The record gives the reactivity of an RNA of 207 nucleotides to DMS and 2A3. DMS (dimethyl sulfate) methylates the pairing face of unpaired adenines and cytosines. Values cover nucleotides 27 to 156. It was measured as part of the RMDB library M2RFPK. For 2A3 the reverse transcriptase was SuperScript II with manganese.
[RMDB]
RNA sequence: GGGAACGACUCGAGUAGAGUCGAAAAGGGUGAUGUCUCCUAACCUUUAUCAAUGGGGGCACUCGGUCGUGCUGUGGGUAGAAAUUUUAUUUCGUGCCUACCUUAGACGCUUGUCGUCGGGAGUAUGUGGGACUGAUGAACUUCGGUUCAUCAGUAAACACACGUUAGAGUUCGCUCUAACGUGUGUAAAAGAAACAACAACAACAAC
Reactivity to DMS in 0.01 (KOAc 150mM, MgCl2 10mM, bicine 150mM(pH8.5), 24C), signal-to-noise 1, nucleotides 027 to 156: g000g000g050u000g000a070u000g040u000c010u000c020c020u000a070a060c060c050u000u000u000a080u020c070a020a060u020g030g060g010g040g020c010a070c050u000c010g000g000u020c070g030u000g020c070u000g010u000g000g050g040u000a300g000a020a020a080u000u010u000u000a070u000u040u000c020g010u000g030c000c000u000a070c020c110u000u000a160g010a070c010g020c040u000u000g010u000c020g040u000c020g040g030g010a200g020u010a020u010g010u000g010g010g010a030c000u000g000a020u000g010a030a000c000u000u010c290g080g000u000u000c010a030u020c000a040g020u000a000a100
Reactivity to 2A3 in 0.01 (KOAc 150mM, MgCl2 10mM, bicine 150mM(pH8.5), 24C), signal-to-noise 3, nucleotides 027 to 156: g040g000g010u060g000a130u030g020u000c010u030c020c010u050a080a090c020c030u080u220u250a250u240c140a110a170u230g000g000g000g000g000c000a010c050u020c040g040g020u020c020g030u070g070c050u060g040u060g010g000g020u020a040g090a020a030a020u170u240u150u160a170u020u130u060c050g030u090g010c000c000u020a050c020c000u020u040a040g000a000c010g020c050u100u270g130u260c010g000u000c010g000g030g000a050g050u060a100u220g040u130g020g030g050a020c000u000g000a000u000g000a000a000c010u020u070c230g060g000u010u010c000a000u000c000a000g000u010a000a040